[RMDB]
RNA sequence: GGGAACGACUCGAGUAGAGUCGAAAAACGGAAGCCUUUCCCCUUGACGCCGGUGAAACUCUGGAAUAGGAAGAAGGAAGGUGGAAAGAAAGGAGGGACCCUCCCGAUCCGAGGGGCCCAACCACCAAAGCUUCGGUCUUCGGACCGAAGAAAAGAAACAACAACAACAAC
Reactivity to 2A3 in 0.01 (KOAc 150mM, MgCl2 10mM, bicine 150mM(pH8.5), 24C), signal-to-noise 3, nucleotides 027 to 129: a000c080g030g040a000a050g020c000c000u050u010u000c000c020c000c000u020u130g060a070c060g010c000c030g010g010u090g010a110a090a060c050u020c060u060g040g000a030a010u030a080g030g020a030a000g010a020a010g050g030a020a020g030g030u000g050g020a070a020a090g140a040a060a000g070g020a030g020g010g050a040c000c000c000u020c000c000c000g040a000u000c040c100g010a000g000g020g050g000c000c000c000a000a000c020c030a040c000c040a000a000a000g010
Reactivity to DMS in 0.01 (KOAc 150mM, MgCl2 10mM, bicine 150mM(pH8.5), 24C), signal-to-noise 3, nucleotides 027 to 129: a180c110g020g020a100a080g080c000c040u010u020u010c000c000c000c000u030u070g000a080c200g060c040c000g000g000u050g020a010a000a010c100u020c050u120g010g000a110a080u000a040g000g030a120a040g010a160a100g000g000a040a020g000g040u050g000g020a150a100a060g030a030a160a070g050g010a130g000g000g020a020c040c000c000u000c050c060c110g050a050u060c130c140g000a010g010g000g020g010c000c010c050a030a110c050c030a080c070c070a020a020a020g020